Chemical mapping of a 177-nucleotide RNA with 2A3 and DMS. Reactivities are given for positions 27 through 126. The 2A3 profile rests on 1,730 reads. 2A3 adducts were read by reverse transcription with SuperScript II with manganese. The reactions ran in a buffer of 150 mM KOAc, 10 mM MgCl2 and 150 mM bicine (pH 8.5), at 24 C.
RNA sequence: GGGAACGACUCGAGUAGAGUCGAAAAAUAAAGAGCGUAAACGCGUCAUUGAGUGACGUGAAGAUGAUCCAAGUGUGCUGUCUACAGUCGUAGAUAGCGCACAUUACGCUAAGAUGAUCAUAAAAAACACAAACGACAAGUUCGCUUGUCGUUUGUGAAAAGAAACAACAACAACAAC
Reactivity to 2A3 in 0.01 (KOAc 150mM, MgCl2 10mM, bicine 150mM(pH8.5), 24C), signal-to-noise 2, nucleotides 027 to 126: a020u240a020a070a000g070a000g020c020g010u020a010a030a000c020g010c000g030u000c010a030u040u270g230a140g300u040g010a010c000g020u000g040a030a010g040a040u040g000a020u000c010c020a010a030g020u010g010u000g000c010u010g010u000c000u000a050c060a220g190u300c230g000u100a000g000a000u000a000g000c000g000c010a010c000a000u000u000a000c010g000c000u000a020a030g090a050u100g010a000u000c050a030u120a060a120a020a000a040a020
Reactivity to DMS in 0.01 (KOAc 150mM, MgCl2 10mM, bicine 150mM(pH8.5), 24C), signal-to-noise 1, nucleotides 027 to 126: a060u010a060a070a030g000a060g010c000g020u000a010a000a110c010g010c000g000u000c000a070u010u010g010a240g000u000g000a000c000g020u000g000a070a110g010a040u000g020a020u000c020c140a090a020g000u000g020u000g050c000u000g010u000c000u000a000c000a200g030u000c180g000u000a000g000a000u010a000g010c000g020c000a000c000a020u000u000a010c010g000c020u000a020a020g020a110u000g000a010u010c010a020u050a000a030a080a010a100a140